Notes: An RNA of 177 nucleotides, treated with DMS and 2A3 and read out base by base. Source: RMDB library VIROID, as collected in RNAgym.

RNA sequence: GGGAACGACUCGAGUAGAGUCGAAAAAUGGCAAAGAGCAUUGGAACGUCGAAGGAACCACUCCCAAGAAGGAAAAAGAGAAGACAAGAAUCGGACGGAUUCCCCAUGACGCUGGAGACAUCUUGGAGCUAUGUGUUAAGUUCGCUUAACACAUAGCAAAAGAAACAACAACAACAAC
Reactivity to DMS in 0.01 (KOAc 150mM, MgCl2 10mM, bicine 150mM(pH8.5), 24C), signal-to-noise 3, nucleotides 027 to 126: a060u000g030g010c080a060a110a140g010a060g000c050a080u010u000g020g010a120a130c100g010u000c080g010a120a100g010g010a100a070c070c070a080c050u000c010c010c020a070a110g000a060a100g000g000a050a040a070a080a060g000a060g000a070a090g000a070c060a040a040g010a050a080u000c070g000g010a060c090g000g010a140u000u000c030c020c010c070a080u010g010a060c130g000c050u000g000g010a110g000a070c140a050u000c030u000u000g000g000a270
Reactivity to 2A3 in 0.01 (KOAc 150mM, MgCl2 10mM, bicine 150mM(pH8.5), 24C), signal-to-noise 1, nucleotides 027 to 126: a000u090g040g020c020a030a070a060g050a030g050c020a040u000u120g050g010a090a050c030g050u040c050g030a070a040g050g010a050a020c040c030a030c060u000c010c030c010a010a060g090a030a050g050g080a080a090a000a040a000g110a020g030a090a010g020a030c050a060a000g020a050a090u080c050g030g030a020c010g000g020a070u050u060c000c000c000c030a040u050g030a010c040g000c040u010g000g030a030g010a010c010a040u020c020u060u030g020g040a040
The reactions ran in a buffer of 150 mM KOAc, 10 mM MgCl2 and 150 mM bicine (pH 8.5), at 24 C.
For 2A3 the reverse transcriptase was SuperScript II with manganese.
Values cover nucleotides 27 to 126.